[RMDB]
An RNA of 177 nucleotides, treated with DMS and read out base by base.
RNA sequence: GGGAACGACUCGAGUAGAGUCGAAAAGUCAAACCAAGAGUUGUAUUGGCAUCUGAGUAGGUUUCUGCUUGUCUCAGAGUCAGGUGUCUGAAAUGUCCUGGGAUCGAUGGUAAGAGCAGCUAAGAGGACUGCAAUUUCGAUUCGUCGAAAUUGCAGUAAAAGAAACAACAACAACAAC
Reactivity to DMS in 0.01 (KOAc 150mM, MgCl2 10mM, bicine 150mM(pH8.5), 24C), signal-to-noise 2, nucleotides 027 to 126: g030u020c160a050a100a150c040c010a020a090g000a120g020u020u000g010u000a180u000u020g020g000c030a090u000c010u010g010a000g020u000a060g020g020u000u010u020c090u020g010c060u000u000g000u010c050u000c010a040g010a110g010u000c000a010g000g020u000g010u000c010u020g000a040a100a060u010g020u000c030c010u000g000g000g010a070u000c160g010a090u010g020g010u000a090a130g000a100g030c070a040g010c100u000a090a100g010a070g000g010

The RNA was probed in 150 mM KOAc, 10 mM MgCl2 and 150 mM bicine (pH 8.5) at 24 C.